Record summary
The record gives the reactivity of an RNA of 177 nucleotides to DMS. For DMS, 876 sequencing reads were counted. Source: RMDB library RFM100, as collected in RNAgym. The reactions ran in a buffer of 150 mM KOAc, 10 mM MgCl2 and 150 mM bicine (pH 8.5), at 24 C. Reactivities are given for positions 27 through 126.
RNA sequence: GGGAACGACUCGAGUAGAGUCGAAAAUCGGGGGCUGCAAGGUUCCCGAUAAUGGUUGUGAACCUUCUUCUUGAAGGCCUUCUGGACGGCGGUUCGAUUCCGCCCAGGUCCACCAGAAGCACAUUGCACAACAGAGUUCGUUCGCGAACUCUGUUGUAAAAGAAACAACAACAACAAC
Reactivity to DMS in 0.01 (KOAc 150mM, MgCl2 10mM, bicine 150mM(pH8.5), 24C), signal-to-noise 1, nucleotides 027 to 126: u000c000g000g010g000g000g010c000u000g010c300a110a010g020g120u000u030c000c000c000g060a000u000a090a000u060g000g020u040u000g000u050g010a170a280c030c000u000u000c000u000u050c140u000u040g000a060a000g000g030c300c000u000u000c000u000g010g000a200c230g010g000c010g010g000u000u020c260g000a300u060u060c000c030g010c030c000c230a060g050g000u000c070c010a300c000c060a030g000a000a000g060c160a040c020a090u060u080g010c300